About this RNA: Chemical mapping of a 177-nucleotide RNA with DMS. It was measured as part of the RMDB library M2PK50. The DMS profile rests on 1,594 reads.

[RMDB]
RNA sequence: GGGAACGACUCGAGUAGAGUCGAAAAGCAAGAUGCUUCGGCAUCUUGCAGUCGUAGCGCGAUCGACAGAUUUACAGCUAUGUCGAACGAGGAAGAGCGCGCACAUCAUCCCUUUCGAGGGAUGAAAUGUAGCGACCAAAUUCGUUUGGUCGCUACAAAAAGAAACAACAACAACAAC
Reactivity to DMS in 0.01 (KOAc 150mM, MgCl2 10mM, bicine 150mM(pH8.5), 24C), signal-to-noise 2, nucleotides 027 to 126: g010c040a000a010g050a000u020g000c000u000u000c200g060g020c000a000u000c000u010u000g000c020a050g010u010c030g030u010a060g000c000g020c020g000a080u000c000g000a020c020a020g010a150u000u000u000a120c220a130g000c150u030a090u010g000u000c010g020a020a100c090g000a140g010g000a070a080g030a100g020c010g020c000g030c000a120c210a160u000c010a010u000c010c000c000u000u010u010c160g020a010g000g000g010a010u000g000a000a050a070